The record gives the reactivity of an RNA of 207 nucleotides to 2A3. 2A3 adducts were read by reverse transcription with SuperScript II with manganese.
[RMDB]
RNA sequence: GGGAACGACUCGAGUAGAGUCGAAAAUUUGAGAUUUGUAACGAAAACAAUUGCCGGUGUUGUGAUGACCAUUAUUCAAUUUUGUACCAUUCCUUUUCAAAGUUGAUAUUUUCUUUUGUUGGUAUACAAGAGAAUUGUCUUCAUUAUGCUCUUGUUCCCCUCGAAUGCAAUUCGUUGCAUUCGAGGGAAAAGAAACAACAACAACAAC
Reactivity to 2A3 in 0.01 (KOAc 150mM, MgCl2 10mM, bicine 150mM(pH8.5), 24C), signal-to-noise 1, nucleotides 027 to 156: u100u060u130g140a120g050a070u100u200u100g060u090a080a070c050g160a090a070a040a000c040a020a060u110u140g120c050c020g000g030u020g040u000u080g010u070g030a090u080g060a050c020c090a060u000u100a040u180u120c010a010a040u130u000u000u000g050u040a040c000c060a080u020u120c000c030u120u270u050u100c070a030a020a030g000u000u020g050a050u000a130u130u020u030u130c020u000u120u030u020g000u050u010g020g130u240a120u030a230c000a030a000g000a000g040a010a010u080u030g050u000c000u040u000c000a010u000u150a050u200g050c020u000c000u050u040g000u060u090c020
The RNA was probed in 150 mM KOAc, 10 mM MgCl2 and 150 mM bicine (pH 8.5) at 24 C.